An RNA of 177 nucleotides, treated with DMS and 2A3 and read out base by base. The data come from the RNA Mapping Database (RMDB), library OK1LIB. 2A3 adducts were read by reverse transcription with SuperScript II with manganese. The RNA was probed in 150 mM KOAc, 10 mM MgCl2 and 150 mM bicine (pH 8.5) at 24 C.
RNA sequence: GGGAACGACUCGAGUAGAGUCGAAAAGGGGGUCUGGCAGAACUUGACAUAGAUUCUAUGGCUAUCCCCAUGACCAUCGCCGGACUUAUGUUCGCGGCAUUUGUCAUCUCUGGAAAGUCAACAGACAAUAGGACAUGUACUUCGGUACAUGUCCUAUAAAAGAAACAACAACAACAAC
Reactivity to DMS in 0.01 (KOAc 150mM, MgCl2 10mM, bicine 150mM(pH8.5), 24C), signal-to-noise 3, nucleotides 027 to 126: g000g000g010g000g000u000c160u000g000g020c060a140g020a060a020c070u000u000g030a230c150a050u030a020g000a180u020u000c000u000a170u020g000g000c040u000a090u030c010c010c250c190a080u000g020a040c010c270a020u000c110g020c050c000g040g020a010c040u040u030a090u030g000u020u000c060g020c000g040g000c010a040u000u000u000g000u000c000a070u020c020u030c070u010g020g020a080a070a070g000u010c010a030a110c090a020g010a100c110a090
Reactivity to 2A3 in 0.01 (KOAc 150mM, MgCl2 10mM, bicine 150mM(pH8.5), 24C), signal-to-noise 5, nucleotides 027 to 126: g040g020g000g010g020u080c060u030g020g040c010a020g010a030a070c040u090u120g090a040c060a120u200a120g170a300u170u000c010u050a080u130g080g000c010u020a070u180c000c010c000c010a000u050g010a010c000c010a020u060c130g010c040c000g030g010a030c040u180u210a210u300g090u130u030c120g000c010g240g000c010a000u010u030u050g020u010c000a020u020c020u000c010u060g030g060a090a080a020g030u030c040a060a050c020a150g020a020c000a040